An RNA of 177 nucleotides, treated with 2A3 and DMS and read out base by base. Reactivities are given for positions 27 through 126. It was measured as part of the RMDB libraries RFM100 and RFMREP. The RNA was probed in 150 mM KOAc, 10 mM MgCl2 and 150 mM bicine (pH 8.5) at 24 C. For 2A3 the reverse transcriptase was SuperScript II with manganese. DMS adducts were read by reverse transcription with MarathonRT.
RNA sequence: GGGAACGACUCGAGUAGAGUCGAAAAUGGCAAGGCUGACAUAGCUUUUACUGAUCUGUCUGUUUAGUGAGUGGACAGGAUGCCAGUCUGGCAGUUUGCAUUGGCAAUAAAUCACUACUAGACAUUUACAUUAAUCGAACUUCGGUUCGAUUAAUGUAAAAGAAACAACAACAACAAC
Reactivity to 2A3 in 0.01 (KOAc 150mM, MgCl2 10mM, bicine 150mM(pH8.5), 24C), signal-to-noise 5, nucleotides 027 to 126: u080g040g020c050a020a010g010g000c010u030g040a110c060a180u130a030g000c010u030u050u030u130a140c080u060g060a090u020c020u020g030u000c010u020g040u020u040u050a060g010u030g140a020g000u030g000g020a030c040a050g030g050a010u030g010c000c000a020g060u030c050u100g070g030c030a140g030u120u160u070g040c060a080u030u060g060g000c020a010a020u080a080a070a010u030c000a010c020u020a020c020u060a050g010a080c010a060u010u010u000
Reactivity to DMS in 0.01 (KOAc 150mM, MgCl2 10mM, bicine 150mM(pH8.5), 24C), signal-to-noise 2, nucleotides 027 to 126: u000g010g000c190a030a030g000g020c000u010g000a070c160a100u040a090g000c000u000u020u020u070a110c030u000g020a090u010c060u000g000u010c010u000g050u000u020u000a060g000u030g000a030g020u000g000g000a060c140a050g010g020a130u020g000c010c010a040g040u060c100u020g000g060c050a070g000u040u000u000g010c030a180u090u020g000g010c050a040a080u010a080a080a220u000c030a080c000u000a020c280u010a050g000a040c090a120u000u000u020